[RMDB]
RNA sequence: GGGAACGACUCGAGUAGAGUCGAAAAAGAGAGAACCUCAGCGGCCCAGUUUUUCCUUUUUUGCCUUGUGUGAAAGGGAAUUUAACACUCUGCCUUGAGCUCCCUCCCCGUUUCGACGGGCUGGUGACCCGUUUAAUACUUUCGAGUAUUAAACGGGAAAAGAAACAACAACAACAAC
Reactivity to DMS in 0.01 (KOAc 150mM, MgCl2 10mM, bicine 150mM(pH8.5), 24C), signal-to-noise 6, nucleotides 027 to 126: a080g010a090g000a090g000a090a120c100c020u000c030a050g010c090g010g000c010c060c110a100g000u020u000u010u000u000c010c000u000u000u000u010u000u020g060c010c030u030u030g030u040g040u000g010a010a010a030g000g000g000a020a020u010u010u020a100a110c090a100c050u010c030u000g000c030c020u010u000g010a100g010c070u000c020c010c000u000c080c000c010c030g010u000u010u030c120g010a060c050g010g010g010c090u010g010g000u010g010a190
Reactivity to 2A3 in 0.01 (KOAc 150mM, MgCl2 10mM, bicine 150mM(pH8.5), 24C), signal-to-noise 9, nucleotides 027 to 126: a000g120a000g020a010g010a040a040c010c000u010c020a020g020c050g040g020c000c020c010a010g000u010u010u000u020u030c040c010u130u190u030u010u050u130g040c020c020u230u230g090u090g010u020g210a030a010a010g030g010g040a010a020u100u110u100a080a030c050a000c030u030c020u010g020c010c010u040u050g020a020g010c010u030c000c000c000u060c010c000c000c010g010u040u040u050c100g070a020c000g010g020g020c040u070g020g050u050g050a040